Structure probing data (DMS and 2A3) for a 177-nucleotide construct. Conditions: 150 mM KOAc, 10 mM MgCl2 and 150 mM bicine (pH 8.5), 24 C. For 2A3, 716 sequencing reads were counted. Values are in units of 0.01, from 0 to 300, in steps of 10.
[RMDB]
RNA sequence: GGGAACGACUCGAGUAGAGUCGAAAAGUCUUAUAGCCAGGGGCGCAAUGCGGCCAGCCGGGACUGAGGAACGCGCUUCGGCACGGAUGCUGGCAUAAUGGUUGUAAGCGGCCCGUCUUGAAACACGUUGAUGUCCAACUUUCGAGUUGGACAUCAAAAAAGAAACAACAACAACAAC
Reactivity to DMS in 0.01 (KOAc 150mM, MgCl2 10mM, bicine 150mM(pH8.5), 24C), signal-to-noise 2, nucleotides 027 to 126: g000u020c010u000u000a000u000a060g020c050c000a050g030g000g020g050c000g000c120a190a100u010g000c000g110g010c000c020a000g000c020c020g000g000g040a110c000u040g000a040g000g000a200a060c080g000c160g000c010u000u000c020g010g000c120a050c000g020g000a150u010g020c000u000g010g020c030a180u070a080a070u000g000g010u000u020g000u010a020a000g010c300g030g010c000c000c000g040u050c080u010u050g000a090a090a090c210a050c210g080
Reactivity to 2A3 in 0.01 (KOAc 150mM, MgCl2 10mM, bicine 150mM(pH8.5), 24C), signal-to-noise 2, nucleotides 027 to 126: g020u030c010u000u020a000u010a030g040c000c010a000g030g000g040g020c060g020c130a060a230u300g020c000g000g020c000c000a000g010c000c000g060g070g070a210c000u030g020a050g050g000a060a060c080g060c020g000c050u030u070c080g000g000c010a050c050g060g000a030u130g010c040u000g040g000c020a070u210a070a070u070g000g030u030u000g020u000a000a020g000c000g090g010c020c000c000g090u060c020u020u030g130a150a140a000c080a010c100g110